[RMDB]
RNA sequence: GGGAACGACUCGAGUAGAGUCGAAAACGGUGAUUCAGCAGGUGGAACCAUCGCUGCGGUGAUCGCACAACAGGCCCGGGACAAUGCCGAUGGCCCCAUACCGCCGAUCGCCUUUCAACUGCUGUGGGAGGGCACGACUGUUCGCAGUCGUGCCCUCAAAAGAAACAACAACAACAAC
Reactivity to 2A3 in 0.01 (KOAc 150mM, MgCl2 10mM, bicine 150mM(pH8.5), 24C), signal-to-noise 1, nucleotides 027 to 126: c070g100g110u140g000a170u080u070c000a000g060c000a020g040g000u000g060g030a010a010c070c000a050u050c050g050c080u100g000c140g010g030u020g000a000u060c090g120c040a050c030a010a220c130a050g040g000c010c000c030g100g000g000a230c300a300a140u240g050c010c010g000a010u040g000g010c000c000c000c000a000u000a190c000c010g000c000c000g000a020u070c000g010c000c140u000u020u000c000a010a000c000u000g000c000u070g000u080g000g090